[RMDB]
RNA sequence: GGGAACGACUCGAGUAGAGUCGAAAAGCGAAGGGAGCGCGGGAGGAAGGAUCAGUACCCGAGAGGGAGUGACGGUAAAGAGGCCGGAGAACGCCGAAGAAACACUCCCAAGAAGAGAGGAGAAUCUUCAGGAAGUGGAAGAUUUUCCCCAUAACGCCUUCAUGCUAAUCUUCGGAUUAGCAUGAAGAAAAGAAACAACAACAACAAC
Reactivity to 2A3 in 0.01 (KOAc 150mM, MgCl2 10mM, bicine 150mM(pH8.5), 24C), signal-to-noise 2, nucleotides 027 to 156: g040c020g060a030a010g060g030g010a000g080c050g000c030g040g000g000a040g010g000a070a030g020g000a020u050c020a020g090u110a040c010c000c010g080a090g030a080g040g010g000a010g010u040g000a040c020g010g000u050a030a050a070g100a040g020g000c010c010g080g010a050g010a070a010c000g000c050c020g050a110a020g050a070a040a000c020a010c020u010c030c000c020a000a010g060a030a020g070a000g020a030g010g020a010g020a020a020u000c000u010u000c020a050g070g110a170a110g150u240g120g030a000a010g030a030u010u000u010u020c010c010c000c010a040u070a180a020c040g060c040